An RNA of 177 nucleotides, treated with DMS and 2A3 and read out base by base. Reactivities are given for positions 27 through 126. The DMS profile rests on 1,735 reads. Reactivities are rounded to 0.1 and cut off at 0 and 3. For 2A3, 4,599 sequencing reads were counted. 2A3 adducts were read by reverse transcription with SuperScript II with manganese. It was measured as part of the RMDB library TTRDES.

RNA sequence: GGGAACGACUCGAGUAGAGUCGAAAAGAUAUGGACCCAUGACAGGGAGCUGGGUUUCGGAAACGAAACAUAGCGACGAUCUGUAUGGGUCCUAAGUCAAACGUAUCCAACUUCGGUUGGAUACGAAGACACGAUAUCUCUUCGGAGAUAUCGUGUCAAAAGAAACAACAACAACAAC
Reactivity to DMS in 0.01 (KOAc 150mM, MgCl2 10mM, bicine 150mM(pH8.5), 24C), signal-to-noise 2, nucleotides 027 to 126: g030a050u010a210u010g000g010a050c010c010c000a000u000g000a010c020a030g000g040g000a110g000c000u000g010g000g020u000u010u000c000g040g000a090a040a170c010g010a010a000a040c000a070u000a040g010c010g010a150c240g020a080u000c000u000g030u010a000u000g000g010g030u000c000c000u000a000a040g010u000c070a100a120a250c020g000u000a000u010c000c000a000a010c010u000u000c270g040g010u000u020g000g010a000u010a020c000g010a090a130
Reactivity to 2A3 in 0.01 (KOAc 150mM, MgCl2 10mM, bicine 150mM(pH8.5), 24C), signal-to-noise 1, nucleotides 027 to 126: g010a020u050a030u130g000g000a000c020c030c010a030u130g300a060c010a010g050g070g180a170g040c020u030g000g000g090u000u000u000c000g000g000a070a040a030c000g000a030a000a000c020a030u040a020g050c020g150a230c110g160a300u070c010u010g030u010a000u010g010g020g000u010c000c000u010a000a010g000u020c000a050a000a100c000g010u000a000u000c000c010a010a010c000u030u080c260g220g000u000u000g000g010a000u000a000c000g020a060a030